[RMDB]
Conditions: 150 mM KOAc, 10 mM MgCl2 and 150 mM bicine (pH 8.5), 24 C. This 177-nucleotide RNA was probed chemically with DMS and 2A3. The DMS profile rests on 1,461 reads. For DMS the reverse transcriptase was MarathonRT. Values cover nucleotides 27 to 126. The data come from the RNA Mapping Database (RMDB), library OK1LIB.
RNA sequence: GGGAACGACUCGAGUAGAGUCGAAAAGAUGCGCCAACAACGCUUCGGCAGGAUCGUGGCGACAUCGUCGAUGGGCGGCCGAAUGGGCAUCCCGGAAUUGGCGGCCUACAACGCCACCAAGUGGGGGUGACCCACUACCCUUCGGGGUAGUGGGUCAAAAAGAAACAACAACAACAAC
Reactivity to DMS in 0.01 (KOAc 150mM, MgCl2 10mM, bicine 150mM(pH8.5), 24C), signal-to-noise 2, nucleotides 027 to 126: g000a040u010g000c040g020c010c020a070a110c170a120a170c040g030c050u010u000c030g010g020c020a030g000g000a140u040c190g000u020g010g010c000g000a160c060a000u000c000g000u000c130g000a140u010g000g010g000c090g030g000c030c040g020a180a110u050g000g000g000c000a070u020c000c000c020g000g040a160a080u000u010g000g010c050g000g000c010c140u000a070c300a050a070c300g000c010c000a010c060c030a040a020g000u000g080g060g020g010g030
Reactivity to 2A3 in 0.01 (KOAc 150mM, MgCl2 10mM, bicine 150mM(pH8.5), 24C), signal-to-noise 2, nucleotides 027 to 126: g000a020u040g000c020g020c080c000a060a060c000a000a060c230g010c030u020u050c120g050g000c000a070g080g110a160u140c130g020u060g020g000c010g160a180c000a000u010c100g000u050c010g040a020u110g000g000g030c040g040g030c000c000g030a120a100u220g000g000g000c020a050u060c010c030c000g080g020a110a100u050u050g000g040c000g010g000c000c000u110a080c110a110a030c060g020c010c010a000c030c000a030a060g120u220g040g000g000g000g090